[RMDB]
The record gives the reactivity of an RNA of 177 nucleotides to DMS and 2A3. For 2A3 the reverse transcriptase was SuperScript II with manganese. The 2A3 profile rests on 6,401 reads. The DMS profile rests on 5,792 reads.
RNA sequence: GGGAACGACUCGAGUAGAGUCGAAAAAAAAAGAUAUGGAAUGCCUACCCACCCGUCCAUAGGCGUUUGACGUCCUUCGGAAACGAAGGACCGAGCCUAUGACGGAGGGCAUUCCUAAGUCAAAAAACAAAUGUGAUAUGUUCGCAUAUCACAUUUGAAAAGAAACAACAACAACAAC
Reactivity to DMS in 0.01 (KOAc 150mM, MgCl2 10mM, bicine 150mM(pH8.5), 24C), signal-to-noise 5, nucleotides 027 to 126: a060a050a040a100a090g000a090u010a200u010g000g010a030a010u010g010c000c000u000a230c000c020c030a300c090c000c000g010u000c070c120a000u000a010g010g000c010g000u000u010u010g010a220c300g010u000c000c000u000u010c000g010g010a070a070a150c010g000a030a000g010g000a000c000c000g000a080g000c000c000u010a000u000g000a030c000g000g000a080g040g000g000c010a010u000u000c000c000u000a020a060g010u040c090a010a050a100a130a100a130
Reactivity to 2A3 in 0.01 (KOAc 150mM, MgCl2 10mM, bicine 150mM(pH8.5), 24C), signal-to-noise 3, nucleotides 027 to 126: a000a010a000a000a040g200a060u300a110u160g000g000a000a010u000g000c000c000u110a250c200c000c000a010c010c010c010g000u070c110c040a000u000a000g020g000c070g090u250u260u300g110a070c040g000u040c010c000u000u020c010g030g020a080a070a050c010g000a010a000g000g000a000c000c010g000a000g010c000c000u000a010u020g000a010c000g000g010a010g030g000g000c000a000u010u000c000c000u000a030a010g080u120c070a010a050a020a050a080a150